[RMDB]
An RNA of 177 nucleotides, treated with DMS and read out base by base. Values cover nucleotides 27 to 126. It was measured as part of the RMDB library TTRINS. The reactions ran in a buffer of 150 mM KOAc, 10 mM MgCl2 and 150 mM bicine (pH 8.5), at 24 C.
RNA sequence: GGGAACGACUCGAGUAGAGUCGAAAAGAUAUGGAGAGUCUUGUAAGGGAGUGUGAUAGGACUAUACUUUCGGAAACGAAAGUACGAAUCCUAGAGCACGAAGAACUUACAAGACUCUCCUAAGUCACAAUUACAACCGGUUCGCCGGUUGUAAUUGAAAAGAAACAACAACAACAAC
Reactivity to DMS in 0.01 (KOAc 150mM, MgCl2 10mM, bicine 150mM(pH8.5), 24C), signal-to-noise 2, nucleotides 027 to 126: g020a050u010a300u010g000g010a030g040a000g010u010c000u000u000g000u010a000a000g000g000g000a090g000u000g020u000g000a300u010a010g000g000a030c080u010a300u000a010c000u010u010u010c000g000g010a230a080a160c000g010a010a010a000g000u000a010c030g010a040a120u000c020c000u000a000g010a300g000c000a000c010g010a080a210g030a120a270c000u010u010a020c020a040a000g000a000c000u000c000u000c000c000u000a000a010g010u000c010a300